This 177-nucleotide RNA was probed chemically with 2A3 and DMS.
Source: RMDB library TTRDEL, as collected in RNAgym.
Reactivities are rounded to 0.1 and cut off at 0 and 3.
As a SHAPE reagent, 2A3 marks flexible, mostly unpaired nucleotides at the ribose 2'-OH.
RNA sequence: GGGAACGACUCGAGUAGAGUCGAAAAGAUAUGGAGUUUCUUGGACCUACCGUGCGACGAUCUCGGAAACGAGGGAGCACAGGUAGCUAGAAACUCCUAAGUCAAAACUUCGACUUCGGUCGAAGAACUUUAUCAGAGUCUUCGGACUCUGAUAAAGAAAAGAAACAACAACAACAAC
Reactivity to 2A3 in 0.01 (KOAc 150mM, MgCl2 10mM, bicine 150mM(pH8.5), 24C), signal-to-noise 2, nucleotides 027 to 126: g040a010u070a060u240g000g010a000g000u030u020u030c030u080u100g110g080a170c000c010u010a020c000c030g030u010g020c030g130a300c010g010a210u000c000u010c020g030g000a080a060a030c010g010a010g000g000g010a010g030c010a010c020a000g000g020u000a000g000c000u000a000g000a010a000a000c000u000c000c000u020a040a010g000u020c010a020a000a150a170c000u010u000c010g000a010c000u010u050c290g180g000u040c000g000a000a000g000a010a010
Reactivity to DMS in 0.01 (KOAc 150mM, MgCl2 10mM, bicine 150mM(pH8.5), 24C), signal-to-noise 2, nucleotides 027 to 126: g000a050u000a300u000g010g030a020g000u000u000u000c000u000u020g020g000a150c300c010u000a030c010c000g050u010g030c000g000a070c200g000a030u000c000u000c000g000g000a160a070a200c010g020a030g000g020g000a030g020c010a010c000a040g060g000u000a000g010c030u000a020g000a020a010a010c000u000c000c000u000a020a080g010u000c010a140a060a130a140c000u000u000c000g000a030c000u000u020c120g030g000u000c000g000a000a010g000a050a080